[RMDB]
Conditions: 150 mM KOAc, 10 mM MgCl2 and 150 mM bicine (pH 8.5), 24 C.
An RNA of 177 nucleotides, treated with 2A3 and DMS and read out base by base.
RNA sequence: GGGAACGACUCGAGUAGAGUCGAAAACCCAGACCGUUCGCGGUCUGGGAAAACCGGAAUAAACAUGGGCCCAUGAGCCCAACCGGAAGGGCGUCCGCCCAAAAACUUGUGUCUUCGGACACAAGAAUCUUACUGCCUUGUUCGCAAGGCAGUAAGAAAAAGAAACAACAACAACAAC
Reactivity to 2A3 in 0.01 (KOAc 150mM, MgCl2 10mM, bicine 150mM(pH8.5), 24C), signal-to-noise 1, nucleotides 027 to 126: c000c000c000a010g000a000c000c010g020u060u050c190g000c010g040g000u000c000u000g010g010g010a050a030a000a040c030c000g000g030a110a190u160a150a120a040c120a150u040g000g000g000c040c060c100a200u230g030a000g010c000c000c000a000a010c000c000g040g020a070a020g010g000g010c030g050u040c050c050g040c000c010c030a030a090a000a010a010c000u000u000g000u000g000u010c000u010u020c260g120g010a000c020a000c000a000a000g010a010a050
Reactivity to DMS in 0.01 (KOAc 150mM, MgCl2 10mM, bicine 150mM(pH8.5), 24C), signal-to-noise 1, nucleotides 027 to 126: c000c000c010a040g030a040c000c010g000u010u010c200g050c020g050g020u010c000u000g010g040g000a020a000a070a040c000c020g000g010a170a070u010a060a040a150c230a120u000g000g010g020c000c040c250a120u010g000a140g000c000c000c010a070a040c010c020g000g000a090a030g020g000g020c020g020u000c080c060g010c000c040c010a000a010a050a040a130c000u000u000g020u000g000u000c000u000u000c200g010g000a020c020a000c000a000a020g010a040a070

For DMS the reverse transcriptase was MarathonRT. It was measured as part of the RMDB library M2PK50.